[RMDB]
RNA sequence: GGGAACGACUCGAGUAGAGUCGAAAACGCGCCUUGAUAUAACCUUUGAUGUUGACCACAAAACCCGGAAUUUACGCCUACGCCCCAAUGCCCACGCAAGAUGAGGUAGGUAACCCCCCCGUGGGUGGAGAAGGACGGAUUUCGAUCCGUCCUUCUCAAAAGAAACAACAACAACAAC
Reactivity to 2A3 in 0.01 (KOAc 150mM, MgCl2 10mM, bicine 150mM(pH8.5), 24C), signal-to-noise 2, nucleotides 027 to 126: c040g010c010g000c030c000u080u070g040a020u050a000u030a090a040c030c000u080u160u160g020a030u080g010u130u170g060a040c020c000a030c080a130a050a010a070c010c000c000g150g030a120a120u050u070u080a040c010g000c030c000u040a000c030g050c060c000c020c010a000a120u150g030c010c000c000a030c000g010c000a040a050g030a160u210g050a000g060g000u050a040g100g000u020a020a010c000c010c000c000c000c000c030g020u050g020g000g000u030g070
Reactivity to DMS in 0.01 (KOAc 150mM, MgCl2 10mM, bicine 150mM(pH8.5), 24C), signal-to-noise 1, nucleotides 027 to 126: c110g040c070g000c000c030u060u000g000a190u010a110u000a080a120c030c000u000u000u010g010a060u010g030u010u000g000a100c090c010a000c050a070a020a050a140c000c060c020g000g000a060a060u010u000u070a080c070g020c010c010u010a040c170g000c030c000c020c060a090a110u030g000c030c020c000a060c070g000c160a040a090g030a040u000g000a090g030g000u000a090g000g050u010a090a070c060c000c000c050c010c010c020g070u050g000g000g020u000g000
An RNA of 177 nucleotides, treated with 2A3 and DMS and read out base by base.
It was measured as part of the RMDB library OK1LIB.